[RMDB]
RNA sequence: GGGAACGACUCGAGUAGAGUCGAAAAAUACGCGUGAGAAAUUUCUCUAUCUCAUCAUGUCUGAGGGCAAGGCGGUGCGCUACGGCAUUGGUGUUGGCCGCCGUGGCUUUGAAUGGUCUGGCACGGACACGACCAGUACUUUCGAGUACUGGUCGUGAAAAGAAACAACAACAACAAC
Reactivity to DMS in 0.01 (KOAc 150mM, MgCl2 10mM, bicine 150mM(pH8.5), 24C), signal-to-noise 2, nucleotides 027 to 126: a080u010a030c160g030c150g000u010g000a060g010a010a040a100u010u000u000c000u000c020u000a240u010c000u030c020a040u010c110a060u020g000u000c040u000g000a130g030g010g000c060a070a050g010g000c050g010g030u000g010c110g010c030u000a020c040g010g020c040a160u000u000g040g020u010g010u000u030g010g000c050c020g000c010c000g030u000g020g000c010u010u010u000g000a090a110u000g010g000u000c010u000g010g000c050a090c050g000g020a200
The record gives the reactivity of an RNA of 177 nucleotides to DMS.
DMS adducts were read by reverse transcription with MarathonRT.
It was measured as part of the RMDB library OK2TRN.
DMS (dimethyl sulfate) methylates the pairing face of unpaired adenines and cytosines.